[RMDB]
RNA sequence: GGGAACGACUCGAGUAGAGUCGAAAAGAUAUGGAGGAGGCCGAGGAUCUACUUCGAGUCGGAAACGACUCGAGAGUAGGGAGGCUGACUCCUAAGUCAAAGAAUCACAAGUUCGCUUGUGAUUCAAGAUACAUACGUUCUUCGGAACGUAUGUAUCAAAAGAAACAACAACAACAAC
Reactivity to DMS in 0.01 (KOAc 150mM, MgCl2 10mM, bicine 150mM(pH8.5), 24C), signal-to-noise 6, nucleotides 027 to 126: g020a050u010a300u010g010g000a030g020g000a300g000g010c000c000g020a060g010g000a040u000c000u000a010c000u000u000c000g010a010g010u000c000g000g000a070a070a170c000g010a020c000u000c000g000a020g010a020g000u000a010g000g000g010a040g020g010c010u000g000a170c010u010c000c010u010a010a070g020u000c040a090a120a110g000a010a010u000c000a010c000a000a010g020u000u020c280g010c000u000u000g010u000g000a000u000u000c010a050a050
Reactivity to 2A3 in 0.01 (KOAc 150mM, MgCl2 10mM, bicine 150mM(pH8.5), 24C), signal-to-noise 2, nucleotides 027 to 126: g020a020u090a040u150g010g000a010g000g010a000g000g000c000c000g050a220g040g020a020u000c000u010a010c000u000u000c010g000a010g000u000c000g000g000a030a030a010c010g010a000c010u010c000g100a140g000a000g090u000a010g000g000g000a000g000g000c000u000g000a000c000u000c000c000u010a110a000g010u020c040a080a050a150g000a000a000u010c010a000c000a000a020g030u070u110c250g110c150u010u000g000u010g000a000u000u000c000a000a010